[RMDB]
RNA sequence: GGGAACGACUCGAGUAGAGUCGAAAAUAUUUUGGAUUUUUGAGACAGGGCCUCACUCUGUCAUCCAGACUGGAGUGCAGUGGUGUGAUCAUGGCUCACUUCAGCCUCAACCUCCUGGGCUCAAGUGGACAAACACUUUGUUCGCAAAGUGUUUGUCAAAAGAAACAACAACAACAAC
Reactivity to 2A3 in 0.01 (KOAc 150mM, MgCl2 10mM, bicine 150mM(pH8.5), 24C), signal-to-noise 5, nucleotides 027 to 126: u240a030u060u170u090u110g060g020a090u040u070u030u090u210g070a060g010a030c050a040g000g060g000c000c030u030c020a040c010u020c010u010g020u060c010a010u030c000c000a020g070a080c040u090g010g020a010g040u090g010c070a050g000u060g130g010u070g060u040g100a090u150c080a110u090g060g000c010u000c040a050c020u060u090c030a000g000c010c010u080c010a060a080c000c030u060c020c030u020g020g060g020c010u020c020a050a030g060u110g100
Reactivity to DMS in 0.01 (KOAc 150mM, MgCl2 10mM, bicine 150mM(pH8.5), 24C), signal-to-noise 2, nucleotides 027 to 126: u050a030u030u010u010u010g030g020a140u000u000u010u000u010g000a030g000a050c090a040g020g000g020c080c020u020c060a040c010u010c040u000g010u000c050a030u020c080c130a060g000a100c070u010g040g000a030g020u000g000c180a040g000u010g000g060u000g000u040g000a030u010c100a050u010g000g000c000u010c160a080c170u030u010c020a050g040c030c010u010c110a050a100c050c020u020c020c020u010g010g020g060c010u000c130a000a020g010u010g060